[RMDB]
RNA sequence: GGGAACGACUCGAGUAGAGUCGAAAAACCUGCUCGUCGCCAUACUUUUCAGCAGUUUCCGCUUUGUUCAGACCCUGCAACGCACCGUAGUGACGUUCGUUCAGUUUCCAGGAUUUCUCAACGGGCACUUCUUUUCCAUAUUCGUAUGGAAAAGAAGAAAAGAAACAACAACAACAAC
Reactivity to 2A3 in 0.01 (KOAc 150mM, MgCl2 10mM, bicine 150mM(pH8.5), 24C), signal-to-noise 5, nucleotides 027 to 126: a000c000c010u010g000c020u020c020g050u020c040g020c050c000a080u070a110c060u090u120u080u150c040a060g030c020a030g030u020u040u010c010c010g000c050u110u070u190g060u040u060c020a010g010a130c020c010c000u030g000c040a050a020c040g010c030a060c010c040g060u090a080g070u040g100a080c030g000u030u040c010g020u060u070c050a080g020u020u080u030c030c020a030g060g040a150u080u180u060c040u010c030a030a040c030g000g060g020c020a030
Reactivity to DMS in 0.01 (KOAc 150mM, MgCl2 10mM, bicine 150mM(pH8.5), 24C), signal-to-noise 5, nucleotides 027 to 126: a070c060c000u000g020c040u000c070g020u000c070g020c040c040a060u010a080c070u000u000u010u010c090a080g010c060a060g010u000u000u000c020c020g000c110u000u010u000g010u000u010c080a100g010a110c110c030c020u000g010c090a060a080c090g010c040a060c040c120g010u010a080g010u000g010a090c070g000u000u000c050g020u000u000c050a080g000u000u000u000c020c020a090g000g000a110u010u010u010c030u000c080a070a070c100g010g000g010c170a040
Source: RMDB library OK2TRN, as collected in RNAgym. The record gives the reactivity of an RNA of 177 nucleotides to 2A3 and DMS. As a SHAPE reagent, 2A3 marks flexible, mostly unpaired nucleotides at the ribose 2'-OH. The reactions ran in a buffer of 150 mM KOAc, 10 mM MgCl2 and 150 mM bicine (pH 8.5), at 24 C. For 2A3, 7,457 sequencing reads were counted. For DMS, 9,088 sequencing reads were counted.